[RMDB]
RNA sequence: GGGAACGACUCGAGUAGAGUCGAAAAAUCGUGCUUGUCCGGUUUGUCGGGCGUGCUUGGCGGAUUUGGGACAUUCGGCGUGCUGGGAGUUUCUCGCGGACUAGGUGCAGCGGGCGUCUCGGCGCGUCAUACCCGCAUCGUUCGCGAUGCGGGUAUGAAAAGAAACAACAACAACAAC
Reactivity to DMS in 0.01 (KOAc 150mM, MgCl2 10mM, bicine 150mM(pH8.5), 24C), signal-to-noise 2, nucleotides 027 to 126: a020u010c020g010u040g000c020u010u000g000u020c000c000g000g000u040u000u040g040u010c040g030g000g010c040g010u000g020c020u000u010g000g000c010g040g000a060u010u010u000g000g050g000a140c100a100u010u020c030g010g000c000g000u000g000c000u000g000g000g000a050g000u030u040u010c000u000c020g010c010g010g000a090c060u010a130g010g010u010g020c110a190g020c010g010g000g020c300g010u010c010u000c030g010g000c020g010c010g000u000
Reactivity to 2A3 in 0.01 (KOAc 150mM, MgCl2 10mM, bicine 150mM(pH8.5), 24C), signal-to-noise 4, nucleotides 027 to 126: a020u080c070g010u070g070c040u090u120g030u050c000c000g050g060u060u070u180g150u170c010g020g030g000c020g020u040g060c010u060u110g050g030c030g050g030a060u050u060u150g090g020g000a000c030a040u040u070c140g020g000c010g010u030g010c000u030g000g040g010a030g000u050u070u120c040u020c010g030c020g030g100a090c060u120a100g210g000u210g110c020a020g010c000g010g000g000c000g170u000c010u000c000g000g010c000g000c010g000u000